[RMDB]
RNA sequence: GGGAACGACUCGAGUAGAGUCGAAAAGCUCUUAAUUGCGUCGGGUACGCGGUUGUAGAAGAUGUGCUUGAUGAGGCGUCACUGGCAGCGACCCGUGAUCGCAUGUAUCGUGUACAGGAGCGGAUUCCCCUAACGUGGCUUUCGAGCCACGUUAGGGAAAAGAAACAACAACAACAAC
Reactivity to 2A3 in 0.01 (KOAc 150mM, MgCl2 10mM, bicine 150mM(pH8.5), 24C), signal-to-noise 1, nucleotides 027 to 126: g000c000u000c030u030u200a180a160u090u040g000c000g000u020c010g040g060g110u130a170c000g010c000g040g000u070u050g070u140a040g070a300a090g050a050u080g070u090g130c060u200u090g080a150u120g070a140g000g000c000g000u060c000a010c030u030g010g000c020a000g080c030g000a070c050c000c000g010u000g060a080u140c010g030c050a020u060g040u010a080u200c190g070u140g000u070a110c100a060g000g020a000g010c110g000g010a020u040u110c000
Reactivity to DMS in 0.01 (KOAc 150mM, MgCl2 10mM, bicine 150mM(pH8.5), 24C), signal-to-noise 1, nucleotides 027 to 126: g000c040u000c000u000u000a080a080u000u000g040c010g050u000c010g000g050g010u000a080c000g070c010g000g020u000u000g000u000a080g020a130a240g030a060u000g010u000g010c000u030u020g010a220u000g040a100g000g060c040g020u000c000a050c030u010g000g000c010a100g010c050g000a040c010c000c000g010u000g000a060u010c020g020c010a030u010g020u000a070u020c180g000u000g000u000a010c080a080g000g000a010g010c000g000g020a300u000u020c020

Source: RMDB library OK2TST, as collected in RNAgym. Chemical mapping of a 177-nucleotide RNA with 2A3 and DMS. Values cover nucleotides 27 to 126. The RNA was probed in 150 mM KOAc, 10 mM MgCl2 and 150 mM bicine (pH 8.5) at 24 C.